[RMDB]
RNA sequence: GGGAACGACUCGAGUAGAGUCGAAAAGAUAAUUUGGCAAAUAGGUAUUUUAUAAUCGUAAAACAAGAGAAAACAUUGAUGUAGUGCUUACUUUCUGCCAGACACUGUUUUGCUCUGUGUGUGCGUGUAGAGACCGUAAGUUCGCUUACGGUCUCUAAAAAGAAACAACAACAACAAC
Reactivity to DMS in 0.01 (KOAc 150mM, MgCl2 10mM, bicine 150mM(pH8.5), 24C), signal-to-noise 2, nucleotides 027 to 126: g010a130u020a070a070u010u000u010g010g020c030a020a090a090u010a100g010g000u000a040u030u000u000u000a050u020a110a090u000c010g000u010a030a110a130a060c020a070a060g010a040g000a040a020a050a050c050a030u020u000g020a160u000g000u000a020g000u000g020c040u010u000a090c220u020u010u010c150u000g010c010c030a090g000a110c040a010c020u000g000u000u000u000u000g020c060u000c020u000g010u000g000u010g010u000g010c010g010u000g020
Source: RMDB library OK2TRN, as collected in RNAgym. An RNA of 177 nucleotides, treated with DMS and read out base by base. The DMS profile rests on 1,449 reads. The reactions ran in a buffer of 150 mM KOAc, 10 mM MgCl2 and 150 mM bicine (pH 8.5), at 24 C. DMS adducts were read by reverse transcription with MarathonRT.